[RMDB]
RNA sequence: GGGAACGACUCGAGUAGAGUCGAAAAGAUAUGGAUCGUUUGCAACAGCUACUGGUCGGAAACGACCAUGUAGACAUGCGACGAUCCUAAGUCAAAAGUCCCAAAUUCGUUCGCGAAUUUGGGACAACCAAGGUAAUGCGUUCGCGCAUUACCUUGGAAAAGAAACAACAACAACAAC
Reactivity to DMS in 0.01 (KOAc 150mM, MgCl2 10mM, bicine 150mM(pH8.5), 24C), signal-to-noise 1, nucleotides 027 to 126: g000a040u000a210u030g020g000a010u000c020g000u000u010u010g060c010a040a100c290a160g010c000u000a000c000u000g000g000u000c000g050g010a040a040a070c000g000a000c000c000a000u010g010u000a000g000a030c180a130u000g010c000g000a020c000g010a000u000c000c000u010a000a000g000u010c030a090a100a080a120g020u000c000c000c000a000a010a000u010u000c000g010u000u020c300g010c010g000a000a000u000u000u000g010g000g010a000c000a000a040
Reactivity to 2A3 in 0.01 (KOAc 150mM, MgCl2 10mM, bicine 150mM(pH8.5), 24C), signal-to-noise 2, nucleotides 027 to 126: g020a020u040a020u080g000g010a010u010c020g050u060u140u300g040c050a150a150c080a300g010c020u000a000c000u010g020g020u000c000g010g000a040a020a010c000g000a010c070c000a020u030g020u000a000g050a060c040a050u030g010c000g020a000c030g000a000u000c000c000u000a040a000g010u000c010a060a100a050a110g020u060c020c020c000a000a000a000u000u010c010g010u020u100c300g000c010g190a030a000u010u010u000g000g020g020a010c000a010a000